[RMDB]
RNA sequence: GGGAACGACUCGAGUAGAGUCGAAAAUCAGGGAAGCCUGGCGGCGAUCCUGCUGCUAUUGCUUAUGACGGCAUUGCUUCUGCUAUGUCUCGAGGUUACGACCGUGUACUUAUUGAUACUUCAGGUCUACGAUCUUAGCUUUCGAGCUAAGAUCGUAAAAAGAAACAACAACAACAAC
Reactivity to 2A3 in 0.01 (KOAc 150mM, MgCl2 10mM, bicine 150mM(pH8.5), 24C), signal-to-noise 2, nucleotides 027 to 126: u020c010a020g040g000g050a060a010g050c010c040u060g060g040c060g000g010c000g040a060u100c020c010u050g000c010u000g000c000u060a060u170u150g000c020u110u100a150u300g060a030c100g000g020c020a000u020u030g010c000u040u120c070u100g050c010u060a030u060g040u000c020u000c040g080a080g070g000u120u070a070c090g010a040c060c020g050u010g010u030a050c030u130u090a120u130u270g060a110u040a070c040u090u060c040a040g040g040u030c010
Reactivity to DMS in 0.01 (KOAc 150mM, MgCl2 10mM, bicine 150mM(pH8.5), 24C), signal-to-noise 3, nucleotides 027 to 126: u000c070a060g010g000g010a040a150g020c010c280u010g000g020c090g010g000c010g000a100u020c100c100u000g000c040u000g010c030u000a050u000u010g010c010u000u010a110u010g030a120c230g020g000c010a060u000u000g000c040u000u000c080u000g000c060u000a090u000g010u000c000u000c030g020a080g020g000u000u000a090c170g010a060c050c000g000u010g010u000a040c050u010u000a110u010u010g020a140u000a050c040u010u000c110a080g020g020u000c030

This 177-nucleotide RNA was probed chemically with 2A3 and DMS.
Values are in units of 0.01, from 0 to 300, in steps of 10.
The RNA was probed in 150 mM KOAc, 10 mM MgCl2 and 150 mM bicine (pH 8.5) at 24 C.
DMS adducts were read by reverse transcription with MarathonRT.